[RMDB]
RNA sequence: GGGAACGACUCGAGUAGAGUCGAAAACGUUGGCAUUUCCCGACCGCCGCUCUCAUGGAACACAUUGUUGCCUUUUCCAUGGCGACAGAGCGCUACCGGAGUCAACACGAGUAGCUGAAUUGCCUCCAAUCGCUGGAGGGUUCGCCCUCCAGCGAUUAAAAGAAACAACAACAACAAC
Reactivity to 2A3 in 0.01 (KOAc 150mM, MgCl2 10mM, bicine 150mM(pH8.5), 24C), signal-to-noise 1, nucleotides 027 to 126: c140g000u010u010g050g000c040a090u030u030u040c000c030c000g000a020c000c000g040c000c010g000c010u040c000u020c020a050u040g010g070a060a000c100a000c010a140u020u120g060u020u040g070c010c020u070u040u080u090c060c010a090u160g040g020c030g050a030c020a020g060a050g070c080g000c000u050a050c000c000g020g000a020g000u010c000a000a020c000a010c020g000a030g060u070a000g000c000u020g060a190a060u090u060g010c000c000u020c030c030
Reactivity to DMS in 0.01 (KOAc 150mM, MgCl2 10mM, bicine 150mM(pH8.5), 24C), signal-to-noise 1, nucleotides 027 to 126: c080g000u000u030g000g000c010a030u010u000u040c000c000c080g040a300c040c100g010c130c060g000c050u010c000u000c000a050u080g000g020a050a080c130a050c160a080u000u000g000u020u020g000c130c130u070u000u020u030c050c070a100u000g020g020c000g120a120c300a000g000a190g000c110g010c030u000a000c130c000g050g020a130g000u020c020a050a020c020a050c060g000a040g080u020a040g070c060u030g000a210a300u060u000g000c110c020u050c010c000
Chemical mapping of a 177-nucleotide RNA with 2A3 and DMS. For 2A3, 755 sequencing reads were counted. For 2A3 the reverse transcriptase was SuperScript II with manganese. It was measured as part of the RMDB library OK1LIB. The reactions ran in a buffer of 150 mM KOAc, 10 mM MgCl2 and 150 mM bicine (pH 8.5), at 24 C. Values cover nucleotides 27 to 126.